[RMDB]
RNA sequence: GGGAACGACUCGAGUAGAGUCGAAAAAUGAGUUGCACACUGGUGGAGCCAUGGUAUCAGGUGAUACAGGCACCACUCAGUAUCACCCUGGUGACAAAAUCAAGUGCACAGGGGCCAUCUGACUCACGGAGACGUCACUGUUCGCAGUGACGUCUCCAAAAGAAACAACAACAACAAC
Reactivity to 2A3 in 0.01 (KOAc 150mM, MgCl2 10mM, bicine 150mM(pH8.5), 24C), signal-to-noise 2, nucleotides 027 to 126: a000u010g010a010g050u000u120g000c010a000c020a000c090u100g000g030u060g000g000a000g120c050c100a300u300g060g000u000a000u000c100a140g240g200u300g040a000u000a000c000a030g000g030c090a010c000c000a000c000u040c000a000g000u050a050u030c000a150c000c000c000u000g210g050u050g010a070c050a000a300a000a170u120c100a190a070g100u080g040c060a060c000a040g000g000g000g100c010c000a000u040c110u010g000a000c010u010c000a080c000
Chemical mapping of a 177-nucleotide RNA with 2A3.